[RMDB]
An RNA of 177 nucleotides, treated with DMS and 2A3 and read out base by base. For 2A3 the reverse transcriptase was SuperScript II with manganese.
RNA sequence: GGGAACGACUCGAGUAGAGUCGAAAAGAGGAAAGAAACUCAAUUUGCUGAUGCAAAUGAGCAUCAUUGUUGAAAAUUCAGGAUCAAUAAAAGGUAUGACUGGGAGGAAAGGUCAAGUCGGAGUAUGCAACUAGGUACCGUUCGCGGUACCUAGUUGAAAAGAAACAACAACAACAAC
Reactivity to DMS in 0.01 (KOAc 150mM, MgCl2 10mM, bicine 150mM(pH8.5), 24C), signal-to-noise 3, nucleotides 027 to 126: g000a080g030g000a060a100a080g010a130a170a120c030u000c010a010a110u020u000u000g020c060u020g010a110u020g030c000a040a070a090u000g010a090g000c090a060u000c050a090u020u010g030u000u000g000a040a060a060a120u000u010c070a070g000g010a130u000c090a040a080u010a040a030a060a050g010g010u000a050u000g000a060c080u000g000g000g010a060g000g000a090a070a060g010g020u000c090a030a050g020u000c090g010g010a050g000u000a060u010g000
Reactivity to 2A3 in 0.01 (KOAc 150mM, MgCl2 10mM, bicine 150mM(pH8.5), 24C), signal-to-noise 3, nucleotides 027 to 126: g040a010g020g050a140a070a010g040a020a080a000c010u030c030a100a100u070u090u140g050c050u150g090a070u140g020c010a000a070a260u120g030a060g010c000a010u030c020a020u010u100g030u020u020g060a060a020a050a080u130u070c060a060g060g050a090u040c010a020a010u130a110a110a010a020g090g010u060a050u080g030a060c030u050g000g030g020a110g030g030a090a000a020g040g030u070c050a050a020g040u030c040g010g000a050g020u090a050u130g080
About this RNA: For 2A3, 2,140 sequencing reads were counted. It was measured as part of the RMDB library OK2TST. Values cover nucleotides 27 to 126. The reactions ran in a buffer of 150 mM KOAc, 10 mM MgCl2 and 150 mM bicine (pH 8.5), at 24 C. DMS adducts were read by reverse transcription with MarathonRT.